Source: RMDB library OK2TRN, as collected in RNAgym. Structure probing data (DMS and 2A3) for a 177-nucleotide construct. For 2A3, 1,151 sequencing reads were counted. Values cover nucleotides 27 to 126. Values are in units of 0.01, from 0 to 300, in steps of 10.
[RMDB]
RNA sequence: GGGAACGACUCGAGUAGAGUCGAAAAGUAUUACCGAGGAACUGUUGCGCCUAUAGCAACGGGCUGGUACAUUAGAUCCCCGUUAGCACGGGCACAUUAUCACAUAACGUAUAAACUCGAUGUACUCAGGACCAAUCAAGUUCGCUUGAUUGGUCCUAAAAGAAACAACAACAACAAC
Reactivity to DMS in 0.01 (KOAc 150mM, MgCl2 10mM, bicine 150mM(pH8.5), 24C), signal-to-noise 1, nucleotides 027 to 126: g000u000a050u000u000a000c020c000g020a060g010g000a140a120c110u050g000u010u000g000c000g000c100c090u100a300u000a160g000c030a050a010c020g000g010g050c140u010g010g000u000a050c200a100u000u020a040g000a050u000c130c000c030c050g000u000u000a050g010c090a120c300g060g000g000c040a000c020a010u120u000a050u020c230a040c150a130u000a050a000c220g050u010a090u000a100a080a170c000u000c020g020a000u000g000u000a020c000u020c110
Reactivity to 2A3 in 0.01 (KOAc 150mM, MgCl2 10mM, bicine 150mM(pH8.5), 24C), signal-to-noise 2, nucleotides 027 to 126: g060u020a020u100u170a020c030c030g000a000g030g050a110a080c070u060g020u070u030g040c040g000c020c060u040a080u140a220g030c020a000a000c000g000g000g000c050u150g030g030u160a100c050a140u130u200a060g000a110u030c020c000c010c000g010u010u020a040g000c000a010c060g000g060g000c020a040c000a040u110u180a070u170c040a030c050a110u180a240a040c070g110u120a030u060a120a100a010c000u000c020g000a040u070g010u000a010c050u060c070